The record gives the reactivity of an RNA of 207 nucleotides to 2A3. Conditions: 150 mM KOAc, 10 mM MgCl2 and 150 mM bicine (pH 8.5), 24 C. It was measured as part of the RMDB library RNAMAK. For 2A3 the reverse transcriptase was SuperScript II with manganese. The 2A3 profile rests on 2,626 reads.

RNA sequence: GGGAACGACUCGAGUAGAGUCGAAAAGGGGUCCUCUUCAAUGAUGCCACAUCUGUGAUGCAUGUUGUCAGCUGAAGCCUCCACGGCUUGGAUUUACAUGUGCAUGGUGUGGUUGAGAAGAGGACGGAGGCACCCAAAAGUGGUCUUCGGACCACAACGCCUGAGGAAAGUUCGCUUUCCUCAGGCGAAAAGAAACAACAACAACAAC
Reactivity to 2A3 in 0.01 (KOAc 150mM, MgCl2 10mM, bicine 150mM(pH8.5), 24C), signal-to-noise 3, nucleotides 027 to 156: g080g000g040g010u020c020c000u020c010u020u010c060a230a300u160g030a030u090g020c000c000a010c010a030u030c040u070g110u030g150a240u160g050c000a010u000g020u050u060g000u030c040a050g030c090u180g140a040a000g010c010c020u100c170c150a060c060g000g000c000u040u050g070g010a040u210u020u230a000c000a000u000g010u030g030c020a020u040g000g000u000g000u000g000g000u010u010g010a000g000a000a010g000a000g000g000a000c000g000g000a000g000g000c010a040c030c000c000a030a030a020a060g010u010g010g000u000c010u030u060c300g110g010a000c000c010a000c000a000a040